[RMDB]
RNA sequence: GGGAACGACUCGAGUAGAGUCGAAAAGAUAUGGAAUGUAGGACAUGCGAGUCGGAAACGACCUCGCAACAGCCUGACAUUCCUAAGUCAAAAGUUGAGAAAUGGACUUCGGUCCAUUUCUCAACAAUCUUUCUUGUCGGUUCGCCGACAAGAAAGAAAAAGAAACAACAACAACAAC
Reactivity to DMS in 0.01 (KOAc 150mM, MgCl2 10mM, bicine 150mM(pH8.5), 24C), signal-to-noise 1, nucleotides 027 to 126: g000a030u030a300u010g030g000a000a000u010g000u010a010g000g040a020c100a170u000g040c010g000a040g010u010c000g000g000a070a080a170c010g010a010c170c130u000c010g020c000a020a090c260a180g020c010c000u020g050a080c000a000u000u000c010c010u000a020a000g000u000c050a070a150a120a100g020u000u030g000a050g000a000a000a000u000g000g010a010c000u000u000c240g010g050u000c000c000a010u000u000u000c010u000c010a010a000c010a070a110
The record gives the reactivity of an RNA of 177 nucleotides to DMS. Source: RMDB library TTRDEL, as collected in RNAgym.